Chemical mapping of a 177-nucleotide RNA with DMS and 2A3. It was measured as part of the RMDB library OK2TST. DMS adducts were read by reverse transcription with MarathonRT. The RNA was probed in 150 mM KOAc, 10 mM MgCl2 and 150 mM bicine (pH 8.5) at 24 C.
RNA sequence: GGGAACGACUCGAGUAGAGUCGAAAAAGCGGGAGUGGUAUCUUCCAGAGUGAAUUUGGCGGGCGGUGGAGUUGUUGGCCCAGGGGAUGAUGUUGCUGGGGGUGGACUCCACAGCUGAAUCAUCAAACGUUAAAUUCCUUUUCGAAGGAAUUUAACGAAAAGAAACAACAACAACAAC
Reactivity to DMS in 0.01 (KOAc 150mM, MgCl2 10mM, bicine 150mM(pH8.5), 24C), signal-to-noise 3, nucleotides 027 to 126: a120g030c120g000g010g000a070g020u000g010g010u000a060u010c050u010u000c020c010a120g000a150g020u000g010a090a110u000u000u000g010g000c080g000g010g010c160g010g020u010g010g000a090g010u000u010g000u010u010g010g020c020c010c010a080g010g020g000g010a080u010g010a060u010g010u010u010g010c020u000g000g010g000g000g010u000g010g010a050c070u010c000c000a020c010a030g010c010u000g010a080a030u000c020a020u000c050a090a080a190
Reactivity to 2A3 in 0.01 (KOAc 150mM, MgCl2 10mM, bicine 150mM(pH8.5), 24C), signal-to-noise 3, nucleotides 027 to 126: a000g080c100g020g020g000a020g030u070g070g120u150a060u050c010u050u020c020c000a020g040a020g100u090g040a130a170u100u090u090g050g000c050g050g060g000c070g080g010u030g000g010a030g000u010u030g040u070u100g110g030c000c000c000a030g010g000g020g020a020u080g010a010u080g090u300u120g070c000u010g000g000g000g000g080u090g090g030a020c000u000c000c000a040c000a010g020c000u040g040a040a020u030c010a010u030c020a040a060a010